The data come from the RNA Mapping Database (RMDB), library M2PK90. Structure probing data (DMS) for a 177-nucleotide construct. The RNA was probed in 150 mM KOAc, 10 mM MgCl2 and 150 mM bicine (pH 8.5) at 24 C.
[RMDB]
RNA sequence: GGGAACGACUCGAGUAGAGUCGAAAACACAUGCCAUCAUAUCGGUUAAGAACUCUUAACUCUGAUGGCUUUCGAGUUAUGUGGUGCAUUGAAGCUCUCCCUACAAUUCAACGUACCGUUCCGUCAAUCAGGAAUCCAGGUUCGCCUGGAUUCCUGAAAAAGAAACAACAACAACAAC
Reactivity to DMS in 0.01 (KOAc 150mM, MgCl2 10mM, bicine 150mM(pH8.5), 24C), signal-to-noise 1, nucleotides 027 to 126: c190a060c110a050u040g010c010c000a040u000c000a080u010a160u000c260g000g010u000u010a000a000g000a250a140c300u030c030u000u010a000a030c000u000c110u010g010a010u000g010g000c000u000u000u000c080g000a060g030u000u000a020u000g000u000g000g000u000g010c030a060u000u000g000a050a060g000c050u000c100u000c000c000c000u000a180c100a080a150u010u000c020a020a070c000g050u000a010c030c000g010u000u000c000c010g000u010c040a080a120

For DMS the reverse transcriptase was MarathonRT.